Description
An RNA of 207 nucleotides, treated with DMS and 2A3 and read out base by base. It was measured as part of the RMDB library RSTRND. 2A3 adducts were read by reverse transcription with SuperScript II with manganese. For DMS, 2,063 sequencing reads were counted.
RNA sequence: GGGAACGACUCGAGUAGAGUCGAAAAGUCGAAGGGAAACCUUUGGCUAGUAUCUGGGUGUAGAUUUCACCUAAGUGCAACACUGUUCAAAUUGCGGGAAAGCCCUAAAGCUUUGCUAACCAAGCUGUCCUAGAAAUGGGAUGGUGGCCAGGUGAAAGAAGAAGAGGUAGUUCGCUACCUCUUCUUCAAAAGAAACAACAACAACAAC
Reactivity to DMS in 0.01 (KOAc 150mM, MgCl2 10mM, bicine 150mM(pH8.5), 24C), signal-to-noise 1, nucleotides 027 to 156: g050u000c000g010a030a060g010g030g000a160a110a260c000c010u000u000u030g000g030c000u000a040g010u000a030u000c060u030g000g000g000u010g010u000a140g010a300u000u000u000c040a030c040c020u000a050a080g010u010g020c050a070a170c010a050c020u000g000u000u010c070a020a040a150u020u000g020c050g020g020g000a110a040a040g000c020c010c030u000a120a070a020g010c010u000u010u000g010c030u010a100a110c070c070a070a120g010c010u000g000u000c000c000u000a070g010a080a060a110u000g000g000g000a020u010g030g050u000g000g050c010c040a120g010g000u000g000a060a100a150
Reactivity to 2A3 in 0.01 (KOAc 150mM, MgCl2 10mM, bicine 150mM(pH8.5), 24C), signal-to-noise 2, nucleotides 027 to 156: g000u000c000g000a000a000g010g000g000a070a050a080c000c010u000u000u000g010g000c010u010a040g090u050a070u050c030u030g020g040g000u000g050u070a040g070a300u080u140u060c000a020c020c000u030a190a000g020u030g120c020a080a030c030a020c120u080g060u030u030c020a040a140a100u150u120g020c080g000g040g000a030a050a070g010c030c000c040u160a130a070a020g000c010u070u110u160g010c020u050a090a050c020c010a030a030g030c020u000g020u030c010c000u020a020g070a030a070a030u100g000g030g000a020u010g030g000u020g040g000c040c020a020g000g010u050g010a040a110a050